Chemical mapping of a 177-nucleotide RNA with 2A3 and DMS. The RNA was probed in 150 mM KOAc, 10 mM MgCl2 and 150 mM bicine (pH 8.5) at 24 C. The data come from the RNA Mapping Database (RMDB), library OK1LIB. The DMS profile rests on 1,895 reads. For DMS the reverse transcriptase was MarathonRT.

RNA sequence: GGGAACGACUCGAGUAGAGUCGAAAAUCACUUUCUUGUUUGAAAACGUGAAUUUCAUCCGUGAUUGGUUCCGUACGGAAUUACUUCCAAUCACGUGAUAAGUUUUAACCAAUCACGGAUGGAAUCAAGAUCAUCGAACAUUCGUGUUCGAUGAUCUAAAAGAAACAACAACAACAAC
Reactivity to 2A3 in 0.01 (KOAc 150mM, MgCl2 10mM, bicine 150mM(pH8.5), 24C), signal-to-noise 3, nucleotides 027 to 126: u020c000a040c070u080u040u060c060u060u170g220u130u070u180g160a130a050a030a020c060g110u080g050a080a080u000u000u000c000a000u000c000c010g000u010g000a000u000u000g000g010u030u000c020c020g070u030a000c020g000g050a000a020u180u030a090c140u040u000c010c000a040a210u130c030a070c070g000u040g040a040u000a020a040g000u030u000u010u230a000a000c000c000a000a000u000c020a010c010g000g000a020u000g000g000a000a000u020c010a000
Reactivity to DMS in 0.01 (KOAc 150mM, MgCl2 10mM, bicine 150mM(pH8.5), 24C), signal-to-noise 2, nucleotides 027 to 126: u000c050a060c120u010u080u010c100u010u000g010u040u020u000g020a040a070a020a120c170g010u010g020a020a040u000u000u000c000a000u020c000c020g000u000g000a000u020u040g000g000u000u000c010c070g030u010a110c240g000g000a050a000u070u020a130c160u020u000c000c000a120a130u070c240a110c060g000u020g000a090u040a020a110g030u000u020u020u050a100a020c020c010a000a000u000c000a000c000g010g000a000u010g020g040a010a020u000c110a110